[RMDB]
RNA sequence: GGGAACGACUCGAGUAGAGUCGAAAACAGGCAUAGUGGCGCAUGUCUGUAGUCCCAGCUACCCAGGAGACUGAGGGAGGAGGAUUACUUCAGUCCAGGGGUUCUAGGCUGCAAUGAGCUGUGAUGGCACCACUGCAUUUAUAAAGACAAUAAAAUGAAACUUAAGAAAUUUCGAUUUCUUAAGUUUAAAAGAAACAACAACAACAAC
Reactivity to DMS in 0.01 (KOAc 150mM, MgCl2 10mM, bicine 150mM(pH8.5), 24C), signal-to-noise 2, nucleotides 027 to 156: c020a000g020g000c000a020u010a040g020u010g000g030c030g030c300a040u010g010u000c010u000g040u000a140g010u010c000c010c020a150g020c060u000a050c000c030c040a250g050g010a200g000a060c020u010g010a070g000g020g000a090g030g030a080g010g000a130u000u010a130c010u000u010c010a050g050u010c020c020a270g060g010g010g000u000u010c060u010a060g020g010c040u010g000c040a080a100u000g000a120g020c000u000g040u010g020a080u010g030g000c030a060c020c040a040c040u000g010c040a070u000u000u000a130u000a120a050a140g010a110c010a050a130u000a040a050a100a130u020g000
Reactivity to 2A3 in 0.01 (KOAc 150mM, MgCl2 10mM, bicine 150mM(pH8.5), 24C), signal-to-noise 3, nucleotides 027 to 156: c000a010g010g000c010a000u010a010g010u010g020g000c010g000c020a000u010g010u000c010u010g020u020a020g060u030c000c010c000a000g010c040u100a060c000c000c000a040g080g100a110g050a070c000u010g000a010g010g030g000a040g040g040a050g000g010a050u110u170a140c000u010u000c010a000g000u000c000c010a010g040g010g000g010u000u030c040u080a060g000g090c010u020g010c050a030a140u150g010a050g030c030u030g040u040g050a080u080g040g000c010a020c030c010a020c030u040g020c020a030u000u190u050a120u100a080a150a010g060a020c030a030a110u170a130a130a020a010u120g020
Overview:
Chemical mapping of a 207-nucleotide RNA with DMS and 2A3. The 2A3 profile rests on 2,296 reads. It was measured as part of the RMDB library OK3TST. For 2A3 the reverse transcriptase was SuperScript II with manganese. Reactivities are given for positions 27 through 156.